[RMDB]
RNA sequence: GGGAACGACUCGAGUAGAGUCGAAAAAGCCAUACCAUUACGAUGGUAUGGCAAGUCCGUGACGGCGAUGGGUCCCGCCUGGCCGAUGCCGAACUGCCGAUCUGGCUGAUGGUUCCUGCCCCGUCAAAAAACGUAAAGCACUUCGGUGCUUUACGAACAGAGUAGAGAAGUUCGCUUCUCUACUCUGAAAAGAAACAACAACAACAAC
Reactivity to 2A3 in 0.01 (KOAc 150mM, MgCl2 10mM, bicine 150mM(pH8.5), 24C), signal-to-noise 6, nucleotides 027 to 156: a000g000c000c000a000u000a000c000c000a000u050u050a060c280g110a020u010g000g000u000a000u010g000g000c000a000a010g020u000c010c010g020u030g010a010c000g000g050c130g050a070u060g010g000g030u080c000c010c000g030c010c030u030g020g000c010c010g030a020u100g100c060c050g140a190a120c120u160g030c040c030g070a070u040c060u130g020g000c030u060g050a110u110g020g000u050u090c000c000u020g030c010c000c000c010g030u030c040a000a030a030a040a030a060c010g000u000a000a000a000g000c000a000c000u040u150c260g000g010u000g000c000u000u000u000a000c000g000a010a000
Reactivity to DMS in 0.01 (KOAc 150mM, MgCl2 10mM, bicine 150mM(pH8.5), 24C), signal-to-noise 2, nucleotides 027 to 156: a150g020c000c000a000u000a020c000c010a050u000u000a110c220g030a160u020g010g020u000a000u000g010g020c000a000a010g010u000c020c010g000u010g010a050c030g010g000c050g010a120u010g000g010g020u000c040c000c030g000c030c020u000g020g010c030c040g000a060u010g010c070c010g010a130a130c100u000g010c050c040g020a100u000c010u000g010g000c020u000g010a110u000g030g010u000u010c010c030u000g000c010c020c000c000g020u000c020a000a020a040a070a090a130c010g000u000a020a000a010g020c000a000c010u000u000c250g000g030u010g010c000u000u010u010a000c000g010a060a150